[RMDB]
RNA sequence: GGGAACGACUCGAGUAGAGUCGAAAAGCACGUAGGUUCAGAUGAUGGGCCCGCAUCUGUACGAAAGAGAGACGAAAGUCCAGCCUACGUGCAUGAGCACGCGGGCCCCGUGCUCUACAGCAAAAGAAUAUGCUGGUGGAUUCGUCCACCAGCAUAUAAAAGAAACAACAACAACAAC
Reactivity to DMS in 0.01 (KOAc 150mM, MgCl2 10mM, bicine 150mM(pH8.5), 24C), signal-to-noise 2, nucleotides 027 to 126: g000c000a000c000g040u000a000g010g030u000u020c030a000g020a020u020g020a040u020g050g000g000c000c000c000g000c040a000u000c000u000g070u020a240c150g010a120a150a060g000a270g010a170g050a060c000g000a110a090a110g000u020c010c070a040g010c030c000u000a000c000g020u000g020c080a000u040g030a150g000c000a070c030g070c180g000g000g000c000c000c000c000g050u000g000c000u010c050u000a090c100a200g000c180a070a050a080a140g010a200
Reactivity to 2A3 in 0.01 (KOAc 150mM, MgCl2 10mM, bicine 150mM(pH8.5), 24C), signal-to-noise 4, nucleotides 027 to 126: g020c000a000c010g010u000a010g010g030u130u090c060a010g010a030u030g010a030u070g050g010g000c020c030c000g010c000a000u000c000u030g160u120a070c120g130a030a130a060g130a000g000a000g000a000c000g070a130a040a010g010u000c030c010a020g010c000c010u000a000c000g010u000g000c000a000u020g000a000g020c000a000c030g010c050g000g000g000c000c000c020c000g000u010g000c020u000c000u050a110c060a090g100c070a030a150a020a000g200a100
Background: Structure probing data (DMS and 2A3) for a 177-nucleotide construct. DMS (dimethyl sulfate) methylates the pairing face of unpaired adenines and cytosines. For DMS, 2,160 sequencing reads were counted. For 2A3 the reverse transcriptase was SuperScript II with manganese.